Conditions: 150 mM KOAc, 10 mM MgCl2 and 150 mM bicine (pH 8.5), 24 C. The record gives the reactivity of an RNA of 177 nucleotides to 2A3 and DMS. Values cover nucleotides 27 to 126. 2A3 adducts were read by reverse transcription with SuperScript II with manganese. The 2A3 profile rests on 1,201 reads.

RNA sequence: GGGAACGACUCGAGUAGAGUCGAAAAGUUCUUUGUGUCAAGAAGGCCACACGCCAGUUCAUCAUGACCGUUACAUUUUGAGGUUAUAAAGUUCAAUUGCAACACAUAGACUAAGGUUUACAUGGUGCAUCAGUCAGUUGUUCGCAACUGACUGAUGAAAAGAAACAACAACAACAAC
Reactivity to 2A3 in 0.01 (KOAc 150mM, MgCl2 10mM, bicine 150mM(pH8.5), 24C), signal-to-noise 2, nucleotides 027 to 126: g020u050u020c000u010u060u050g090u010g050u030c000a000a070g010a070a090g080g040c110c000a080c030a020c130g000c000c000a060g000u030u060c010a080u020c000a000u040g010a040c020c000g010u050u030a080c030a170u080u150u050u190g080a040g040g000u060u040a080u080a150a110a030g070u070u020c060a010a100u110u080g000c050a020a040c050a010c030a100u050a010g040a000c000u010a080a070g070g020u000u030u040a050c020a010u040g000g040u070g040
Reactivity to DMS in 0.01 (KOAc 150mM, MgCl2 10mM, bicine 150mM(pH8.5), 24C), signal-to-noise 2, nucleotides 027 to 126: g000u020u000c030u000u000u010g030u010g020u020c080a050a100g010a080a070g010g010c030c050a080c150a100c110g000c040c070a080g000u000u000c060a050u000c060a020u000g000a070c100c060g000u010u000a050c060a110u010u000u040u010g000a060g010g010u010u000a120u020a120a090a140g000u010u000c030a060a070u010u000g010c030a010a000c010a100c070a070u000a020g000a040c050u000a100a090g000g010u010u000u000a060c090a060u000g000g000u000g030